An RNA of 177 nucleotides, treated with 2A3 and DMS and read out base by base.
For 2A3 the reverse transcriptase was SuperScript II with manganese.
Conditions: 150 mM KOAc, 10 mM MgCl2 and 150 mM bicine (pH 8.5), 24 C.
For DMS the reverse transcriptase was MarathonRT.
Values are in units of 0.01, from 0 to 300, in steps of 10.
RNA sequence: GGGAACGACUCGAGUAGAGUCGAAAAUUGAGAAUAAAACCACUUUGCCUACUAAUAUAGCUUUUGAACUCUAUGCUAAGCGUGCUGUACGCUCGCAUCCCGAUUUCAAAUUGCUACACAAUUUACACCAAUGUACUUAGUUCGCUAAGUACAUUGGAAAAGAAACAACAACAACAAC
Reactivity to 2A3 in 0.01 (KOAc 150mM, MgCl2 10mM, bicine 150mM(pH8.5), 24C), signal-to-noise 9, nucleotides 027 to 126: u050u050g030a050g060a080a080u120a130a080a040a040c030c010a040c030u080u060u100g020c010c010u060a100c030u070a150a180u170a060u030a130g000c000u030u020u000u020g010a010a010c000u000c010u030a010u030g000c010u030a050a030g000c000g040u020g050c100u220g080u100a010c010g010c010u000c010g010c000a010u020c040c060c020g020a010u010u000u000c020a030a020a020u070u060g000c000u040a020c030a000c000a100a130u070u120u190a050c060a020
Reactivity to DMS in 0.01 (KOAc 150mM, MgCl2 10mM, bicine 150mM(pH8.5), 24C), signal-to-noise 6, nucleotides 027 to 126: u010u000g010a110g000a130a080u000a050a070a140a130c080c090a040c080u000u000u000g020c030c020u000a070c170u010a090a090u010a130u000a010g010c010u000u000u000u000g000a020a030c050u000c010u000a020u000g010c020u000a070a050g010c000g040u010g020c240u010g010u000a020c020g010c000u000c300g000c010a030u010c150c090c110g000a060u000u000u000c030a010a010a010u010u000g010c010u000a030c190a070c210a050a050u000u010u000a110c220a170